[RMDB]
RNA sequence: GGGAACGACUCGAGUAGAGUCGAAAAGAUAUGGAUAACGAAGGACUUUUGACGCCUAUCUCGGAAACGAGUAAGGGCGAUAAGUCUCAAGUUAUCCUAAGUCAAAACUAACACUUCGGUGUUAGAAGGUAUUAAAUGGGUUCGCCCAUUUAAUACCAAAAGAAACAACAACAACAAC
Reactivity to DMS in 0.01 (KOAc 150mM, MgCl2 10mM, bicine 150mM(pH8.5), 24C), signal-to-noise 6, nucleotides 027 to 126: g010a030u010a300u000g000g010a000u000a000a000c010g010a300a230g000g010a010c000u000u000u000u000g020a200c060g010c000c000u000a300u010c000u000c010g000g010a080a070a140c000g010a010g000u010a110a260g020g010g010c000g000a060u000a020a020g010u000c000u000c020a040a300g000u000u000a010u000c000c000u000a010a070g010u010c030a100a060a120a160c010u000a000a010c000a000c000u000u010c210g040g010u000g000u000u000a010g010a120a050
Reactivity to 2A3 in 0.01 (KOAc 150mM, MgCl2 10mM, bicine 150mM(pH8.5), 24C), signal-to-noise 5, nucleotides 027 to 126: g040a010u060a020u150g000g000a000u010a000a020c050g110a190a060g050g010a010c020u100u120u170u210g220a120c020g010c000c010u060a120u160c000u000c000g000g050a090a070a060c010g000a000g010u080a200a300g050g000g000c010g000a000u000a000a000g000u000c000u000c020a010a000g000u000u000a000u000c000c000u000a060a010g040u010c030a010a000a110a160c010u010a000a000c000a000c000u060u110c300g130g000u010g000u000u000a000g020a050a090
The data come from the RNA Mapping Database (RMDB), library TTRDEL. An RNA of 177 nucleotides, treated with DMS and 2A3 and read out base by base. For 2A3 the reverse transcriptase was SuperScript II with manganese. The DMS profile rests on 5,254 reads.